RNA sequence: GGGAACGACUCGAGUAGAGUCGAAAAGAUUGAGGACGAAAUAGAGAAAUGUCUUCUUAAGUUUGGAGAAUUCUGCCUUAAGAAGCAGCUCCGAGAAAACGAGGAACGGAAAGAAUCCUCAAGGUACAUGUCUUAUUCCUAGCAGAAGGGGGGAGCGGAGAAUUAACGACUUCGGUCGUUAAUUCUCAAAAGAAACAACAACAACAAC
Reactivity to 2A3 in 0.01 (KOAc 150mM, MgCl2 10mM, bicine 150mM(pH8.5), 24C), signal-to-noise 2, nucleotides 027 to 156: g010a000u060u040g030a000g020g010a000c030g050a070a050a070u170a070g040a030g060a020a150a120u030g030u010c010u010u010c000u010u010a080a060g030u100u300u210g040g000a060g010a170a300u150u030c000u030g060c010c000u000u000a040a000g000a000a000g010c000a010g030c000u010c010c000g030a060g040a020a090a010a010c030g010a010g000g000a090a040c040g040g040a080a050a070g020a070a100u050c000c000u010c030a030a030g010g000u030a040c020a090u060g040u030c000u020u070a060u200u030c000c000u020a020g000c080a020g040a110a080g000g020g000g000g030g000a030g000c040g000